[RMDB]
RNA sequence: GGGAACGACUCGAGUAGAGUCGAAAAUCGGUUUACACUAUUGAUAGAAUAUUAUUCUCCGAAAUGGGAGAAGAGUGUUAUUAUGCACUGUUACCCAUAAGUAGUAAAUUGGGAGAGAAAAGCGGAGCGUGCCUAUUGUCUUCGGACAAUAGGCACGAAAAGAAACAACAACAACAAC
Reactivity to 2A3 in 0.01 (KOAc 150mM, MgCl2 10mM, bicine 150mM(pH8.5), 24C), signal-to-noise 1, nucleotides 027 to 126: u070c000g000g070u030u060u080a030c060a010c010u120a090u170u100g070a070u110a160g030a030a110u060a040u300u060a070u180u060c010u050c010c000g040a050a140a030u050g000g000g000a190g050a050a020g000a000g010u000g030u030u120a270u260u110a030u170g000c000a000c000u000g050u110u030a000c000c000c020a000u030a010a050g070u100a020g050u040a050a000a020u060u090g090g030g020a160g010a000g010a060a120a000a010g070c020g000g000a020g070
Reactivity to DMS in 0.01 (KOAc 150mM, MgCl2 10mM, bicine 150mM(pH8.5), 24C), signal-to-noise 2, nucleotides 027 to 126: u010c030g030g000u000u000u010a030c030a040c050u000a120u010u000g000a130u000a080g000a110a080u020a100u000u010a110u010u000c010u010c020c000g020a050a110a030u010g010g000g000a210g010a000a020g000a020g010u030g020u000u000a130u020u000a130u020g010c000a000c000u000g000u000u000a070c010c000c000a020u000a070a060g010u010a130g010u000a030a020a070u010u000g000g020g040a090g010a100g000a070a040a060a130g010c060g020g000a070g030
Structure probing data (2A3 and DMS) for a 177-nucleotide construct. The RNA was probed in 150 mM KOAc, 10 mM MgCl2 and 150 mM bicine (pH 8.5) at 24 C. 2A3 adducts were read by reverse transcription with SuperScript II with manganese. 2A3 is a SHAPE reagent: it acylates the 2'-hydroxyl of flexible nucleotides of all four kinds.